An RNA of 177 nucleotides, treated with DMS and 2A3 and read out base by base. For DMS the reverse transcriptase was MarathonRT. Values cover nucleotides 27 to 126. The RNA was probed in 150 mM KOAc, 10 mM MgCl2 and 150 mM bicine (pH 8.5) at 24 C.
[RMDB]
RNA sequence: GGGAACGACUCGAGUAGAGUCGAAAAGAGAAAAGAUGACUAGGUUAUUGAAUUCCGAGUUGAGUCCACGGACUCAGCGCAUCAUUGGAUCGAGUGCCAAGAAAAGCCCCAGCGUAUGCUAAGCGACUGCUGAUCUUCAUUUCGAUGAAGAUCAGCAAAAAGAAACAACAACAACAAC
Reactivity to DMS in 0.01 (KOAc 150mM, MgCl2 10mM, bicine 150mM(pH8.5), 24C), signal-to-noise 2, nucleotides 027 to 126: g000a170g030a070a070a120a080g030a020u000g000a060c080u000a180g000g010u030u000a100u020u010g020a140a050u000u000c030c030g030a070g000u020u000g000a040g000u010c010c080a120c300g000g000a000c010u000c000a000g010c010g050c100a050u060c040a080u000u000g000g020a220u010c060g000a050g020u030g030c070c020a050a110g010a050a040a080a110g010c010c100c090c020a100g010c030g000u000a070u030g000c030u000a050a100g000c080g030a070c130
Reactivity to 2A3 in 0.01 (KOAc 150mM, MgCl2 10mM, bicine 150mM(pH8.5), 24C), signal-to-noise 3, nucleotides 027 to 126: g100a000g000a000a050a010a000g080a050u070g020a030c040u070a020g040g040u110u100a070u100u210g100a180a170u110u020c020c030g010a050g030u000u000g010a000g000u000c040c000a010c220g060g010a020c000u000c010a030g000c000g010c020a020u030c000a030u070u180g030g000a000u030c000g020a010g020u120g040c000c000a020a030g030a020a050a000a000g020c000c000c000c000a000g000c000g050u090a030u120g020c010u020a040a080g010c000g070a040c070